[RMDB]
RNA sequence: GGGAACGACUCGAGUAGAGUCGAAAAGAUGAUGAUCAGUGCGGCCUAGUCCUGAGCGUGAAGCAGGUGUGUGGCUGUCCGUCUAGCUGACUCCCUAUGGAGUUUGUCCGUGCGGACUUGGCCGCCUCCUAGUGAUGCUGUUCGCAGCAUCACUAGGAAAAGAAACAACAACAACAAC
Reactivity to DMS in 0.01 (KOAc 150mM, MgCl2 10mM, bicine 150mM(pH8.5), 24C), signal-to-noise 1, nucleotides 027 to 126: g000a070u000g010a130u000g020a140u000c090a030g010u000g010c060g020g020c010c020u000a040g010u000c010c020u000g010a160g000c000g000u000g000a120a120g000c030a020g000g010u000g010u010g020u010g020g000c020u020g020u000c070c000g030u000c100u000a060g010c020u010g000a020c000u010c000c000c300u010a230u010g020g000a010g010u000u000u000g020u000c030c060g000u000g000c250g000g000a000c000u010u000g000g000c000c000g020c000c000u000
Reactivity to 2A3 in 0.01 (KOAc 150mM, MgCl2 10mM, bicine 150mM(pH8.5), 24C), signal-to-noise 1, nucleotides 027 to 126: g070a010u210g000a010u090g000a020u050c080a000g010u030g120c010g020g010c000c020u010a000g000u000c000c010u060g070a040g040c020g010u130g020a040a040g040c040a010g030g020u040g020u080g010u040g190g000c020u070g110u000c010c000g010u000c030u060a050g000c030u010g030a020c010u000c020c000c020u060a180u300g030g000a030g020u050u050u050g030u010c030c000g030u050g060c030g000g000a000c000u020u020g000g030c020c000g010c010c010u000

This 177-nucleotide RNA was probed chemically with DMS and 2A3. DMS (dimethyl sulfate) methylates the pairing face of unpaired adenines and cytosines. The data come from the RNA Mapping Database (RMDB), library RFMREP. Conditions: 150 mM KOAc, 10 mM MgCl2 and 150 mM bicine (pH 8.5), 24 C. 2A3 adducts were read by reverse transcription with SuperScript II with manganese.